[RMDB]
Source: RMDB library OK2TRN, as collected in RNAgym. This 177-nucleotide RNA was probed chemically with 2A3 and DMS. The reactions ran in a buffer of 150 mM KOAc, 10 mM MgCl2 and 150 mM bicine (pH 8.5), at 24 C. The DMS profile rests on 14,913 reads. DMS adducts were read by reverse transcription with MarathonRT. Reactivities are given for positions 27 through 126. 2A3 adducts were read by reverse transcription with SuperScript II with manganese.
RNA sequence: GGGAACGACUCGAGUAGAGUCGAAAACAGGCAAUUUCUGAGGUGGAAAGGAUGGUUGUGGCCACCUGAUAAAGCAACGGCUGGAACAGAUGAUGGUUGCGCUGAUCGAUCAGGGUGAUGCGAACCACCAUAAAUCCUGAUUCGUCAGGAUUUAUGGAAAAGAAACAACAACAACAAC
Reactivity to 2A3 in 0.01 (KOAc 150mM, MgCl2 10mM, bicine 150mM(pH8.5), 24C), signal-to-noise 5, nucleotides 027 to 126: c020a010g070g020c030a060a110u050u100u020c040u090g050a060g030g030u050g010g040a080a080a070g070g020a040u070g050g000u080u070g120u070g100g000c000c010a020c000c000u030g030a050u060a090a200a030g050c050a040a030c030g040g000c010u040g020g040a060a020c030a050g070a080u150g020a030u070g060g040u040u120g080c020g000c020u010g010a050u040c040g020a020u040c030a010g060g040g000u040g010a020u030g010c000g000a010a010c010c010a010
Reactivity to DMS in 0.01 (KOAc 150mM, MgCl2 10mM, bicine 150mM(pH8.5), 24C), signal-to-noise 8, nucleotides 027 to 126: c090a090g000g000c070a080a070u010u000u000c050u010g010a080g010g020u000g000g000a080a100a080g010g010a070u010g010g010u000u010g030u000g010g010c040c030a070c020c010u000g010a070u000a070a090a100g020c110a100a070c080g010g010c020u010g010g010a070a080c080a080g000a090u000g010a130u000g010g020u000u000g010c050g030c020u010g000a130u000c040g000a100u000c070a060g000g000g010u000g000a150u000g010c020g000a060a060c030c030a160